Description
The record gives the reactivity of an RNA of 177 nucleotides to 2A3 and DMS. 2A3 adducts were read by reverse transcription with SuperScript II with manganese. For 2A3, 16,168 sequencing reads were counted. It was measured as part of the RMDB library OK2TST. DMS adducts were read by reverse transcription with MarathonRT. The RNA was probed in 150 mM KOAc, 10 mM MgCl2 and 150 mM bicine (pH 8.5) at 24 C.

RNA sequence: GGGAACGACUCGAGUAGAGUCGAAAAAGGAUAUAAAAUGAAAACCAUUAGAAAUGGCGUGGUAGUUGGCGUGUCUUUGCUCGGCGGUUGCACGAGCGUUGAGACUCGCUUUGACGCUCUGCGUGUCGUUAGAAAUCAAUUUCGAUUGAUUUCUAACAAAAGAAACAACAACAACAAC
Reactivity to 2A3 in 0.01 (KOAc 150mM, MgCl2 10mM, bicine 150mM(pH8.5), 24C), signal-to-noise 9, nucleotides 027 to 126: a000g110g010a090u120a010u080a140a150a050a030u170g070a060a060a030a050c020c010a040u060u130a060g130a090a130a060u110g040g000c010g020u020g020g040u060a040g020u020u060g020g000c010g000u010g000u000c000u030u030u120g010c010u000c000g000g020c040g170g130u200u280g010c160a170c190g010a000g000c010g030u060u160g010a010g000a010c000u000c020g000c000u030u020u050g000a010c020g010c070u030c010u060g010c020g010u060g060u080c050
Reactivity to DMS in 0.01 (KOAc 150mM, MgCl2 10mM, bicine 150mM(pH8.5), 24C), signal-to-noise 9, nucleotides 027 to 126: a080g010g010a110u010a100u010a070a050a080a080u010g000a100a080a110a140c030c010a050u000u010a130g010a090a150a080u000g010g000c020g020u000g010g020u010a090g010u000u000g010g000c020g010u000g000u000c000u000u000u020g010c010u000c010g000g000c010g020g010u010u020g020c020a100c020g010a010g010c000g000u010u010g000a020g000a030c020u000c010g010c010u000u010u010g010a060c090g010c110u000c050u000g000c030g010u000g010u000c100